Background: Structure probing data (DMS) for a 177-nucleotide construct. Values cover nucleotides 27 to 126. For DMS, 5,215 sequencing reads were counted. Conditions: 150 mM KOAc, 10 mM MgCl2 and 150 mM bicine (pH 8.5), 24 C. Source: RMDB library TTRINS, as collected in RNAgym.

RNA sequence: GGGAACGACUCGAGUAGAGUCGAAAAGAUAUGGACUGAGAACUACACUGCCAAGCCGUUGAAAAGUGAGGUAAUUCGGAAACGAAUUACCUCACUUGGAGGCUUGGCAGUGCUCAGUCCUAAGUCACUAAUAUGUCCUGUUCGCAGGACAUAUUAGAAAAGAAACAACAACAACAAC
Reactivity to DMS in 0.01 (KOAc 150mM, MgCl2 10mM, bicine 150mM(pH8.5), 24C), signal-to-noise 4, nucleotides 027 to 126: g000a050u000a300u010g010g020a020c010u000g000a010g000a110a030c120u030a300c010a000c010u000g000c000c000a020a010g020c000c010g010u000u010g010a240a110a020a010g010u000g000a010g010g020u000a000a010u010u000c000g000g000a130a090a260c010g000a010a000u000u000a000c000c000u010c000a000c000u000u000g000g000a070g010g010c000u000u000g000g010c000a010g000u010g000c000u000c000a000g000u000c000c000u000a000a060g020u000c030a300